[RMDB]
RNA sequence: GGGAACGACUCGAGUAGAGUCGAAAACUGCGACGGGCUCAAAGGCCUGCCGGAAGCCGUGGAGGCAACCUGGCCGAAUUCCAUGGUGCAGACCUGUAUCGUGCACCUGAUCCGGGCGGCCAACAGGAACCAAAAGGAGCUUCGGCUCCUUUUGGUUAAAAGAAACAACAACAACAAC
Reactivity to DMS in 0.01 (KOAc 150mM, MgCl2 10mM, bicine 150mM(pH8.5), 24C), signal-to-noise 1, nucleotides 027 to 126: c020u000g000c010g050a010c000g040g010g030c030u000c080a090a140a160g000g010c000c030u000g020c020c040g010g020a090a230g010c010c020g030u020g010g010a280g010g020c060a030a070c040c030u010g030g000c070c000g000a070a120u000u000c030c070a070u000g000g020u000g010c000a160g000a080c130c190u010g000u000a100u000c030g010u000g010c000a000c020c010u000g000a060u020c110c080g000g000g000c110g010g000c040c010a030a090c080a020g010g000

Background
This 177-nucleotide RNA was probed chemically with DMS. Conditions: 150 mM KOAc, 10 mM MgCl2 and 150 mM bicine (pH 8.5), 24 C. For DMS, 861 sequencing reads were counted. It was measured as part of the RMDB library OK2TST. Reactivities are rounded to 0.1 and cut off at 0 and 3.